[RMDB]
RNA sequence: GGGAACGACUCGAGUAGAGUCGAAAAGGGCCGUUCACUGGAUCCGAAGCCUCUAGAAGGAUAAUAUAGGCCCUCCAUACCCUACUCCGACUCAAUACGUCCCCGUCGUACAGAAUGGUAACAUAUCGAACACAACCUAACUUCGGUUAGGUUGUAACCAUUAAUUGCGGUUCGCCGCAAUUAAUGGAAAAGAAACAACAACAACAAC
Reactivity to DMS in 0.01 (KOAc 150mM, MgCl2 10mM, bicine 150mM(pH8.5), 24C), signal-to-noise 1, nucleotides 027 to 156: g030g010g020c000c010g000u020u020c070a160c040u000g000g000a060u010c000c070g010a300a300g010c000c000u000c020u010a090g000a150a090g010g000a060u000a110a150u000a150u000a140g050g010c000c000c010u000c030c000a240u000a020c020c000c000u000a050c020u010c010c030g000a000c060u000c040a090a130u010a130c000g010u010c010c000c000c030g070u010c060g000u000a200c100a130g000a110a100u000g000g000u010a050a140c030a080u000a100u000c040g030a120a150c180a010c000a010a010c000c000u000a000a000c000u020u030c290g040g030u000u000a000g000g020u000u000g000u000a000a090
Reactivity to 2A3 in 0.01 (KOAc 150mM, MgCl2 10mM, bicine 150mM(pH8.5), 24C), signal-to-noise 3, nucleotides 027 to 156: g010g010g000c030c000g020u220u190c090a080c160u160g080g020a030u000c000c050g050a080a040g060c070c010u040c020u080a080g030a200a110g110g020a020u020a280a040u080a060u060a120g020g000c000c000c010u000c000c000a050u060a050c000c000c010u030a050c010u070c050c020g080a010c020u040c160a080a110u120a190c030g020u000c020c030c000c010g080u070c010g010u050a090c040a070g090a120a100u080g040g050u120a080a010c020a050u130a090u190c090g040a100a040c040a000c000a070a000c000c000u000a000a000c000u050u050c100g080g010u000u000a000g010g000u010u000g000u000a000a000
Source: RMDB library M2RFPK, as collected in RNAgym. Chemical mapping of a 207-nucleotide RNA with DMS and 2A3. For DMS the reverse transcriptase was MarathonRT. For 2A3 the reverse transcriptase was SuperScript II with manganese. The 2A3 profile rests on 1,124 reads. The RNA was probed in 150 mM KOAc, 10 mM MgCl2 and 150 mM bicine (pH 8.5) at 24 C. Reactivities are given for positions 27 through 156.